[RMDB]
RNA sequence: GGGAACGACUCGAGUAGAGUCGAAAAGGAUGCUCGUUCGCGAGCAUCCACUGAGAUAGCCACUAUAAAGAUUAAGUCUUCCUACUCGAGAGAGGAUGUCUAUGCUCCUGGCCUUCGGGCCAGGAAAGAGAUUUACGAUAUUCGUAUCGUAAAUCUCAAAAGAAACAACAACAACAAC
Reactivity to 2A3 in 0.01 (KOAc 150mM, MgCl2 10mM, bicine 150mM(pH8.5), 24C), signal-to-noise 5, nucleotides 027 to 126: g010g000a000u000g010c010u010c010g010u050u070c240g010c010g100a000g000c000a000u010c000c000a000c010u050g010a030g020a040u080a040g080c080c060a090c070u120a080u120a210a170a030g080a070u140u190a120a090g050u000c000u010u010c000c000u010a020c000u000c020g020a020g000a000g010a020g090g070a100u110g060u030c040u050a110u180g100c020u020c000c000u000g000g000c010c000u030u070c220g050g000g000c000c000a000g010g000a000a000a000
Reactivity to DMS in 0.01 (KOAc 150mM, MgCl2 10mM, bicine 150mM(pH8.5), 24C), signal-to-noise 4, nucleotides 027 to 126: g020g000a010u000g020c000u000c000g000u000u020c190g060c010g030a020g000c000a000u000c000c000a020c120u010g000a160g000a060u000a080g010c110c130a080c070u010a090u010a080a070a090g010a090u000u000a080a130g020u000c010u000u010c030c010u000a030c010u000c010g010a080g000a140g000a100g000g020a080u000g000u010c040u000a100u000g010c150u000c010c010u000g010g010c000c010u000u020c160g010g010g010c000c000a000g000g000a020a020a050